Source: RMDB library OK3TST, as collected in RNAgym.
This 207-nucleotide RNA was probed chemically with 2A3 and DMS.
For 2A3, 4,957 sequencing reads were counted.
For 2A3 the reverse transcriptase was SuperScript II with manganese.
The RNA was probed in 150 mM KOAc, 10 mM MgCl2 and 150 mM bicine (pH 8.5) at 24 C.
Values cover nucleotides 27 to 156.
RNA sequence: GGGAACGACUCGAGUAGAGUCGAAAAGAAGCUCUUCCUGAGAGAGAAGUCAGUCAGGAGACUGAUCCUAGCUUCAGAGCUAGGAAGUCGAGAGACUCUCUGAGAUCCUUCAGCUAGCUGAGAGAAGCUAGGAUCUCGACUAGCUGAGAGAAGUCUCAUGAUUACAACUAUUCGUAGUUGUAAUCAUAAAAGAAACAACAACAACAAC
Reactivity to 2A3 in 0.01 (KOAc 150mM, MgCl2 10mM, bicine 150mM(pH8.5), 24C), signal-to-noise 5, nucleotides 027 to 156: g110a060a020g020c020u000c000u060u030c010c020u060g000a040g000a000g010a000g020a130a030g110u140c090a000g030u000c010a010g020g070a060g040a020c010u020g040a040u000c000c000u000a010g000c000u170u160c150a150g040a010g200c000u000a000g000g020a020a010g010u020c020g000a010g000a000g010a110c000u000c000u000c010u030g040a040g010a070u050c020c000u030u030c020a000g010c010u000a000g000c020u050g010a020g010a000g020a170a050g040c100u110a050g080g050a030u000c000u000c000g020a050c010u010a000g000c010u020g000a010g010a000g010a150a010g020u000c010u000c010
Reactivity to DMS in 0.01 (KOAc 150mM, MgCl2 10mM, bicine 150mM(pH8.5), 24C), signal-to-noise 3, nucleotides 027 to 156: g010a110a100g010c050u000c020u000u000c030c040u020g000a150g000a130g010a110g000a130a110g010u000c000a050g010u000c020a110g010g030a300g010a050c010u000g000a130u000c000c000u010a000g000c010u000u000c200a220g010a080g020c000u000a010g000g000a020a030g050u000c030g000a300g000a200g000a080c020u010c020u000c010u000g010a070g020a080u000c000c020u000u010c010a040g000c020u000a030g000c060u000g000a110g010a080g000a150a170g010c090u020a080g030g000a130u010c020u000c010g030a040c010u000a030g000c020u000g010a060g010a040g000a060a130g000u010c010u000c020